[RMDB]
RNA sequence: GGGAACGACUCGAGUAGAGUCGAAAAGAUAUGGAAAUCUAUGAACCACAUCGAUCUAGCUUCGGAAACGAAGCUAGGGAGUGGAAUAGAGUUUCCUAAGUCAAACUUCCUCCUUCGGGAGGAAGAAGUUCAUAUACAACUUCGGUUGUAUAUGAACAAAAGAAACAACAACAACAAC
Reactivity to DMS in 0.01 (KOAc 150mM, MgCl2 10mM, bicine 150mM(pH8.5), 24C), signal-to-noise 5, nucleotides 027 to 126: g000a020u000a080u020g000g000a020a030a040u000c010u000a010u010g010a240a250c020c000a010c000a300u000c240g010a020u020c000u000a010g000c000u000u000c000g010g000a020a030a050c000g020a010a010g000c010u000a000g000g000g010a000g070u000g010g010a170a010u000a020g000a110g010u000u000u000c000c000u010a030a140g010u000c000a130a170a300c000u000u000c000c000u000c010c000u000u010c230g030g010g010a010g000g000a000a000g000a030a100
Reactivity to 2A3 in 0.01 (KOAc 150mM, MgCl2 10mM, bicine 150mM(pH8.5), 24C), signal-to-noise 6, nucleotides 027 to 126: g000a010u020a020u030g000g000a010a010a020u010c020u030a040u090g210a300a300c060c000a080c020a090u300c070g000a010u000c010u000a000g020c000u000u000c000g000g000a000a000a010c000g000a020a000g000c000u000a000g000g000g000a010g000u020g010g030a030a010u030a020g130a080g100u000u040u000c000c000u000a020a000g010u020c020a020a080a180c000u000u000c000c000u020c020c020u030u080c300g170g000g000a000g030g010a000a000g000a010a000

An RNA of 177 nucleotides, treated with DMS and 2A3 and read out base by base. 2A3 adducts were read by reverse transcription with SuperScript II with manganese. It was measured as part of the RMDB library TTRDES. For DMS the reverse transcriptase was MarathonRT. Values cover nucleotides 27 to 126.